[RMDB]
RNA sequence: GGGAACGACUCGAGUAGAGUCGAAAAGAUGAACGUGGCGCUGCAAUUCACGUUCUGACACUGGUGAUAACGCUCUUUUGUCGUGUCAGUGAUAUAGCGGCUUGUACGCGCAUGUGCGGCAUGCUGACAUGAUGCGCGAUUUCGAUCGCGCAUCAUGAAAAGAAACAACAACAACAAC
Reactivity to 2A3 in 0.01 (KOAc 150mM, MgCl2 10mM, bicine 150mM(pH8.5), 24C), signal-to-noise 3, nucleotides 027 to 126: g070a060u120g000a000a010c000g020u030g040g000c120g000c150u180g020c060a030a050u030u090c020a000c030g030u010u020c010u010g030a010c000a010c040u080g010g010u110g100a120u090a300a020c050g040c040u020c030u080u200u060u110g130u180c020g010u010g010u030c010a020g010u020g180a050u070a010u050a190g050c020g010g000c050u030u070g070u100a210c040g020c010g000c070a140u140g090u130g150c020g000g010c010a010u030g000c000u030g060a050
Reactivity to DMS in 0.01 (KOAc 150mM, MgCl2 10mM, bicine 150mM(pH8.5), 24C), signal-to-noise 3, nucleotides 027 to 126: g020a150u000g010a010a020c000g040u000g010g010c260g020c080u000g000c150a080a110u000u000c020a010c020g000u000u000c020u000g010a180c040a050c050u010g020g020u000g000a140u000a070a060c110g010c160u000c270u000u000u010u000g020u010c010g020u000g000u000c020a010g000u010g000a110u010a080u000a110g010c030g010g000c060u010u010g020u000a050c050g040c030g000c160a070u000g020u000g010c040g010g010c000a080u000g010c030u000g000a160